[RMDB]
RNA sequence: GGGAACGACUCGAGUAGAGUCGAAAAUCAGCAGAAGGAGAGUGCCGUCUUCGCUGUGCUCUUCCGGGACUUCAUCACCGCGUACAAGAAGCUAAUGGGCGUCCUCGGAUGCGUUUAAUGGACAACAAGGGUAGGGAUUAUUCGUAAUCCCUACCCUAAAAGAAACAACAACAACAAC
Reactivity to DMS in 0.01 (KOAc 150mM, MgCl2 10mM, bicine 150mM(pH8.5), 24C), signal-to-noise 2, nucleotides 027 to 126: u000c060a140g060c020a100g000a040a080g020g000a090g000a070g000u010g060c030c000g010u020c010u020u000c090g010c060u040g020u000g040c070u000c040u010u000c000c000g010g000g000a050c130u000u060c080a080u000c090a150c100c050g050c020g000u040a090c100a070a100g000a040a100g020c010u000a050a100u010g020g000g010c060g000u000c030c030u020c080g050g020a030u020g000c090g020u000u020u020a060a060u060g030g000a140c080a110a060c150a070
Reactivity to 2A3 in 0.01 (KOAc 150mM, MgCl2 10mM, bicine 150mM(pH8.5), 24C), signal-to-noise 3, nucleotides 027 to 126: u070c010a010g050c010a010g020a080a020g100g050a080g000a020g060u110g070c030c010g070u070c030u090u020c020g020c000u030g030u070g020c010u010c000u080u000c010c000g000g020g000a010c000u060u010c040a020u040c010a030c130c030g060c030g070u200a060c100a100a030g120a070a030g070c050u100a110a050u040g030g040g020c070g060u070c000c010u030c030g030g000a020u070g020c000g000u020u000u040a090a140u140g060g050a040c030a040a000c030a080